Structure probing data (2A3 and DMS) for a 177-nucleotide construct. Source: RMDB library OK1LIB, as collected in RNAgym. Reactivities are rounded to 0.1 and cut off at 0 and 3. The RNA was probed in 150 mM KOAc, 10 mM MgCl2 and 150 mM bicine (pH 8.5) at 24 C.
RNA sequence: GGGAACGACUCGAGUAGAGUCGAAAACAAGCAGAUCUCAGGAAUGACAUCAUCCUGCAUCUAAAUUAUCAAGAUGCAAUUAUAAUUUUUGAUAUGAUAAUACCAUCUGAAGGAGUUCAUAGGCAUGCGUUAAGCUCCAAUUCGUUGGAGCUUAACGAAAAGAAACAACAACAACAAC
Reactivity to 2A3 in 0.01 (KOAc 150mM, MgCl2 10mM, bicine 150mM(pH8.5), 24C), signal-to-noise 5, nucleotides 027 to 126: c070a040a020g070c030a030g020a120u000c030u030c080a020g040g080a080a050u070g100a100c030a070u050c000a000u010c030c020u010g000c000a010u010c010u070a090a180a150u210u120a110u090c090a070a000g000a020u030g000c010a020a000u200u110a110u100a170a200u060u020u110u110u090g040a050u030a010u100g040a000u040a060a030u050a200c030c030a050u040c080u060g050a120a050g060g040a020g030u000u060c020a020u050a090g100g020c070a040u070g010
Reactivity to DMS in 0.01 (KOAc 150mM, MgCl2 10mM, bicine 150mM(pH8.5), 24C), signal-to-noise 3, nucleotides 027 to 126: c030a060a150g020c120a100g000a050u010c040u030c020a020g000g010a050a060u010g020a030c060a090u010c080a040u020c060c110u020g010c190a010u000c010u010a030a080a070u020u020a070u040c100a060a010g000a000u000g000c030a080a100u030u000a080u050a010a130u010u070u010u010u010g000a080u040a080u010g010a050u000a030a040u000a070c110c040a060u000c060u010g000a130a120g000g000a110g000u010u010c040a070u000a040g000g040c100a070u000g010
DMS adducts were read by reverse transcription with MarathonRT.